[RMDB]
RNA sequence: GGGAACGACUCGAGUAGAGUCGAAAAUUGAUAUCUGCUAAAACCCGGUGCAUUCAUCAAUGCAGGUUAAGCCACAGGGAUGUCCCGACCGGAGGCCGACAAUCCAGGGAACCGGAUGUCAUCACGUAAAACCGUCAGUUCUUCGGAACUGACGGAACAAACAUAGAGUGUUCGCACUCUAUGUUUGAAAAGAAACAACAACAACAAC
Reactivity to 2A3 in 0.01 (KOAc 150mM, MgCl2 10mM, bicine 150mM(pH8.5), 24C), signal-to-noise 5, nucleotides 027 to 156: u030u010g010a000u010a020u050c010u020g020c050u100a030a050a170a240c010c000c010g020g010u050g000c000a020u000u160c020a070u120c090a140a060u030g000c010a030g080g000u060u080a050a020g020c030c030a070c070a100g030g010g020a030u050g080u050c000c000c010g020a020c000c010g080g020a060g010g000c000c000g030a030c070a080a110u030c040c040a050g050g000g030a030a050c030c000g010g010a010u020g020u020c030a050u040c040a040c090g120u120a010a060a090a130c000c000g010u000c000a000g000u000u000c010u020u110c160g090g000a000a010c000u010g010a000c000g000g000a000a010
Reactivity to DMS in 0.01 (KOAc 150mM, MgCl2 10mM, bicine 150mM(pH8.5), 24C), signal-to-noise 3, nucleotides 027 to 156: u000u010g000a110u010a030u000c000u000g010c030u000a120a120a080a140c020c010c050g030g090u000g010c030a060u000u000c100a140u000c090a090a160u000g000c020a110g040g010u000u000a110a070g020c030c030a080c070a160g000g010g020a090u000g000u000c020c000c010g010a090c040c010g020g030a110g040g010c010c050g030a080c060a070a120u000c030c000a060g000g070g030a130a130c130c040g010g010a060u000g010u000c010a100u000c110a060c110g010u010a070a040a080a160c000c000g020u000c010a020g010u000u000c000u000u000c280g040g000a000a010c000u000g000a010c000g000g010a020a020